The record gives the reactivity of an RNA of 177 nucleotides to 2A3 and DMS. DMS adducts were read by reverse transcription with MarathonRT. For 2A3 the reverse transcriptase was SuperScript II with manganese.
RNA sequence: GGGAACGACUCGAGUAGAGUCGAAAAGCACAUACCACACCACUUCAUAUCUUUUAAUUCAUGAUGGGGACCGUGCAGUGAUUACAUAUGAGGGGGACUCCAGUGCUGGGUAUAAUCAUGAUGUGUCCCAUGCUACCAAUUUCGAUUGGUAGCAUGGAAAAGAAACAACAACAACAAC
Reactivity to 2A3 in 0.01 (KOAc 150mM, MgCl2 10mM, bicine 150mM(pH8.5), 24C), signal-to-noise 2, nucleotides 027 to 126: g020c000a020c010a070u150a070c040c020a030c020a010c020c000a060c020u030u000c030a040u020a060u080c070u000u160u090u130a180a110u130u110c030a030u050g050a030u060g020g000g010g060a020c040c020g050u050g020c010a020g000u030g090a090u100u150a070c070a050u170a140u230g050a110g040g000g010g000g060a030c010u010c040c040a020g010u030g080c010u020g000g000g000u090a070u030a100a040u070c050a030u090g040a010u040g110u020g020u040c020
Reactivity to DMS in 0.01 (KOAc 150mM, MgCl2 10mM, bicine 150mM(pH8.5), 24C), signal-to-noise 3, nucleotides 027 to 126: g010c060a070c050a070u010a150c090c020a110c120a070c040c020a060c040u000u000c030a030u000a060u000c070u000u010u000u000a040a150u000u000c080a050u010g000a040u010g030g000g010g010a040c100c050g020u000g010c040a070g000u000g010a080u000u000a090c160a070u000a070u000g000a060g010g000g010g000g000a100c090u000c040c020a060g000u000g010c040u010g000g000g050u000a080u000a080a060u000c050a060u010g010a050u010g000u000g020u000c070